[RMDB]
RNA sequence: GGGAACGACUCGAGUAGAGUCGAAAACAGAUAAGAAAAGACCGAGAGGUUCAAGCUUAUAGGGCAGAAAGCGGGGGACAGCAGUACUCAACAUUCCCUGUGGCUGAGACGAAGGUAGUACUCCAACAAAACGAGUACUAGUUCGCUAGUACUCGAACCAAUGUACCUAGUUCGCUAGGUACAUUGGAAAAGAAACAACAACAACAAC
Reactivity to 2A3 in 0.01 (KOAc 150mM, MgCl2 10mM, bicine 150mM(pH8.5), 24C), signal-to-noise 4, nucleotides 027 to 156: c040a020g120a110u180a190a010g050a060a120a020a000g030a020c030c030g030a020g000a010g130g020u090u080c080a040a000g010c000u080u080a030u110a200g040g030g000c050a030g140a100a070a010g070c080g000g000g000g010g000a020c020a020g020c000a020g030u030a050c030u040c040a040a020c000a080u060u060c010c000c000u030g050u070g050g000c040u020g010a020g010a050c050g010a060a000g020g000u010a020g010u010a060c020u000c030c000a030a050c020a040a200a010a050c010g000a000g000u000a000c000u010a000g000u010u040c180g000c110u000a000g000u000a000c000u000c000g000a010a010
Reactivity to DMS in 0.01 (KOAc 150mM, MgCl2 10mM, bicine 150mM(pH8.5), 24C), signal-to-noise 2, nucleotides 027 to 156: c060a180g040a090u000a040a070g020a070a130a190a150g000a030c030c040g000a200g020a210g000g020u010u000c030a130a200g000c020u010u010a060u000a090g000g030g060c000a160g010a100a100a050g010c090g000g000g030g000g050a160c070a070g030c020a100g040u000a060c020u000c010a020a050c060a120u000u000c010c000c000u010g010u010g000g020c030u010g000a090g010a120c030g010a030a060g020g020u010a070g030u000a030c050u010c000c030a030a140c160a020a050a120a140c020g000a030g030u010a000c010u010a000g030u000u000c300g020c000u000a060g020u000a010c010u000c000g010a010a110